[RMDB]
RNA sequence: GGGAACGACUCGAGUAGAGUCGAAAACUUGUGCUCGGCUUGAGAGCGAUACGCGCUCGCUUGUGCUGAUUAUUAUACGCGUAAGCCACGACCCUGUCACAAGCCGGCUCGACACGGGUCUGGUCGCUCUGUGAGUUGCUUUCGAGCAGCUCGCGGGAAAAGAAACAACAACAACAAC
Reactivity to 2A3 in 0.01 (KOAc 150mM, MgCl2 10mM, bicine 150mM(pH8.5), 24C), signal-to-noise 9, nucleotides 027 to 126: c000u020u040g010u030g020c010u010c020g030g010c050u080u110g110a040g010a010g100c000g020a040u070a070c070g000c000g000c030u010c020g020c010u030u060g030u050g010c020u030g090a030u010u100a080u110u120a100u080a040c040g000c000g010u010a020a010g000c000c010a040c040g060a100c000c000c000u000g040u050c000a000c000a010a010g000c000c000g000g000c000u000c010g010a000c000a010c030g000g000g000u000c000u000g010g020u080c020g010c030
Reactivity to DMS in 0.01 (KOAc 150mM, MgCl2 10mM, bicine 150mM(pH8.5), 24C), signal-to-noise 9, nucleotides 027 to 126: c030u010u010g010u010g010c020u000c300g000g010c080u010u010g000a100g000a040g010c000g010a170u020a060c160g010c020g010c120u010c030g010c020u010u010g000u010g010c020u010g010a090u020u030a090u030u030a090u030a090c110g000c010g010u010a050a040g010c010c080a070c130g000a050c010c000c010u000g000u020c010a040c070a050a050g010c100c010g000g000c050u000c060g000a020c050a060c080g000g000g000u000c000u010g000g000u010c040g010c040